[RMDB]
RNA sequence: GGGAACGACUCGAGUAGAGUCGAAAAACACUUUGUAUGAUUCUGGAAACCCAUUUAACAUAAUUUUUCAAGCUGAGCGUACAAUUGCACCAACAAUGGAUGUCAUCAUACAGGAACCGAAGCCAGCAGGUAAACACAUGUUCGCAUGUGUUUACCUAAAAGAAACAACAACAACAAC
Reactivity to DMS in 0.01 (KOAc 150mM, MgCl2 10mM, bicine 150mM(pH8.5), 24C), signal-to-noise 2, nucleotides 027 to 126: a070c130a040c050u010u000u020g000u000a020u000g000a040u000u000c120u000g010g000a080a070a070c070c000c030a080u010u000u010a080a090c110a070u010a080a050u010u010u000u000u010c100a090a150g010c060u000g000a060g000c010g000u000a050c200a050a060u010u010g000c010a060c070c050a030a060c190a040a060u000g010g010a100u000g000u000c070a050u000c010a070u000a040c030a060g000g000a030a120c070c070g010a040a050g010c020c070a040g030c210
Reactivity to 2A3 in 0.01 (KOAc 150mM, MgCl2 10mM, bicine 150mM(pH8.5), 24C), signal-to-noise 2, nucleotides 027 to 126: a000c010a010c040u000u170u000g030u010a060u060g030a070u100u130c090u190g040g050a050a080a070c000c050c040a040u040u160u100a060a010c020a030u140a190a210u240u140u010u090u090c060a120a000g030c030u030g020a020g100c050g000u030a030c070a080a070u100u120g040c060a030c060c030a040a080c040a010a140u030g020g010a040u090g080u120c020a050u010c000a010u060a100c020a000g030g030a070a020c050c010g040a030a010g040c020c000a020g050c010
The record gives the reactivity of an RNA of 177 nucleotides to DMS and 2A3. The 2A3 profile rests on 1,036 reads. Source: RMDB library OK2TRN, as collected in RNAgym. The reactions ran in a buffer of 150 mM KOAc, 10 mM MgCl2 and 150 mM bicine (pH 8.5), at 24 C.